[RMDB]
RNA sequence: GGGAACGACUCGAGUAGAGUCGAAAAAUGUCCGAGGCCGUCGAGGACAUAAACCGCCAGCCGGGCAAGGACGACCAGCGAGAGGAGUACAUCGACGUGCUCGCCGGGUGGAUUGAGGACGGCGAAAUGCUGAUGGAGGUUUCGACCUCCAUCAGCAAAAAGAAACAACAACAACAAC
Reactivity to DMS in 0.01 (KOAc 150mM, MgCl2 10mM, bicine 150mM(pH8.5), 24C), signal-to-noise 1, nucleotides 027 to 126: a010u000g000u000c000c000g010a290g010g060c030c040g040u010c020g010a230g000g000a010c010a010u000a000a040a210c060c040g010c040c040a090g000c160c040g000g000g000c020a110a070g010g020a040c030g010a180c090c090a160g040c140g010a120g030a190g020g000a060g010u050a110c210a210u000c080g000a060c110g010u000g000c020u000c000g010c040c000g030g010g000u000g000g000a120u020u000g000a120g000g000a010c040g000g000c030g040a030a140a110

This 177-nucleotide RNA was probed chemically with DMS. The RNA was probed in 150 mM KOAc, 10 mM MgCl2 and 150 mM bicine (pH 8.5) at 24 C. In probing experiments dimethyl sulfate is read out at A N1 and C N3, which are open when not base-paired.